[RMDB]
RNA sequence: GGGAACGACUCGAGUAGAGUCGAAAACUAAGGAGCGUGUGCUGGCGGCGGUCCUUCACGGUGCGUUGAUCCGGGCGGAUUACCAGUACGUGCGCGAGUUGUGUGCGCGGCUCGGAGCAACGGAAAAGGUGGUGCGCUCGUUCGUGGGCGCACUACCAAAAGAAACAACAACAACAAC
Reactivity to DMS in 0.01 (KOAc 150mM, MgCl2 10mM, bicine 150mM(pH8.5), 24C), signal-to-noise 7, nucleotides 027 to 126: c050u010a070a080g000g010a070g000c040g010u010g000u020g000c020u000g000g000c050g000g000c020g010g000u000c020c020u000u010c060a060c110g010g010u010g010c010g020u000u000g000a050u010c010c010g010g000g020c020g000g010a170u020u020a110c090c080a100g010u030a170c060g020u000g010c000g020c010g010a110g010u000u000g010u010g010u010g000c000g000c010g000g000c000u000c010g010g000a040g010c020a000a010c010g000g000a050a050a080a100
Reactivity to 2A3 in 0.01 (KOAc 150mM, MgCl2 10mM, bicine 150mM(pH8.5), 24C), signal-to-noise 5, nucleotides 027 to 126: c030u030a020a040g050g000a020g030c020g010u050g010u050g020c000u010g020g000c000g010g000c000g010g060u020c010c000u020u030c040a030c040g040g060u110g010c000g000u000u000g010a030u000c000c000g000g000g000c020g020g040a090u060u120a110c000c010a020g050u050a030c020g020u030g000c010g000c000g020a140g080u040u020g070u030g020u010g010c010g000c000g010g000c010u000c000g000g000a010g000c000a000a010c000g020g000a020a030a010a010
Background:
The record gives the reactivity of an RNA of 177 nucleotides to DMS and 2A3. Source: RMDB library OK1LIB, as collected in RNAgym.